[RMDB]
RNA sequence: GGGAACGACUCGAGUAGAGUCGAAAAGAGUGUGUGUGUACGAACACGAACUCGUACGUGUACUCACGAGAGAGUACGUUCGUGUGUUCGUGUGUACGAACGAUCGAACGAACGAACGUACACACUCACUCUCGUGUACUCUCGUGUGAGUGUGUUCGGGUUAUUAACCGUUCGCGGUUAAUAACCCAAAAGAAACAACAACAACAAC
Reactivity to DMS in 0.01 (KOAc 150mM, MgCl2 10mM, bicine 150mM(pH8.5), 24C), signal-to-noise 1, nucleotides 027 to 156: g020a040g030u000g010u000g010u010g020u000g030u000a050c030g000a050a120c010a130c030g000a060a130c050u000c040g000u000a020c030g030u020g000u010a080c010u000c000a060c080g020a220g000a150g080a210g020u000a070c000g000u000u020c010g030u020g040u010g020u030u010c010g070u000g040u000g000u000a140c160g010a080a130c060g000a280u000c030g050a120a100c090g000a030a120c030g010a020a230c030g050u010a010c000a050c030a000c030u000c060a080c020u000c010u000c010g020u000g010u000a030c050u010c010u000c070g020u010g000u000g010a080g020u000g010u020g040u000u000c040
Reactivity to 2A3 in 0.01 (KOAc 150mM, MgCl2 10mM, bicine 150mM(pH8.5), 24C), signal-to-noise 5, nucleotides 027 to 156: g040a020g000u040g000u020g000u010g000u000g010u040a000c010g040a100a010c050a010c060g020a050a030c010u010c030g020u060a030c020g050u030g020u030a070c060u060c080a040c110g080a100g010a010g000a010g070u010a010c030g000u020u030c000g010u030g020u020g000u020u000c000g000u030g040u090g060u130a030c030g010a060a010c040g030a080u160c080g040a030a050c010g010a030a010c020g010a050a010c000g020u000a000c000a000c000a000c000u010c000a000c000u010c000u000c000g030u050g030u110a030c020u010c010u010c000g040u060g050u080g060a050g000u110g010u010g000u010u020c010